The record gives the reactivity of an RNA of 207 nucleotides to 2A3. Conditions: 150 mM KOAc, 10 mM MgCl2 and 150 mM bicine (pH 8.5), 24 C. 2A3 adducts were read by reverse transcription with SuperScript II with manganese. The data come from the RNA Mapping Database (RMDB), library OK3TST. For 2A3, 519 sequencing reads were counted.
[RMDB]
RNA sequence: GGGAACGACUCGAGUAGAGUCGAAAAAUCGAACCACCAGAACUGAGGGAGCGUUUGAUCGCCGCGCGAUGCCGAAUCUCGAAGAUCGGGCAGCGCCCCUCAAACGUCUCGCUGAACCAGUCGAUCGCCGACCGUUGCUCGUUGUCAAGCGGGUAGAGUGGAUUAUAGCUUUCGAGCUAUAAUCCACAAAAGAAACAACAACAACAAC
Reactivity to 2A3 in 0.01 (KOAc 150mM, MgCl2 10mM, bicine 150mM(pH8.5), 24C), signal-to-noise 1, nucleotides 027 to 156: a000u100c030g010a050a020c010c020a000c040c000a060g060a070a050c010u090g060a060g040g030g000a050g000c030g000u010u020u000g070a090u060c040g020c160c000g010c030g020c020g290a300u030g060c040c010g090a150a150u000c030u120c170g100a130a070g010a030u020c040g000g030g000c000a000g000c010g010c040c000c030c000u030c000a000a000a000c010g090u030c030u000c080g100c010u030g040a070a030c030c010a020g050u040c050g060a030u070c090g070c100c020g060a080c010c010g080u060u060g000c010u000c040g050u150u050g100u230c040a080a000g050c050g000g000g020u080a150g030a090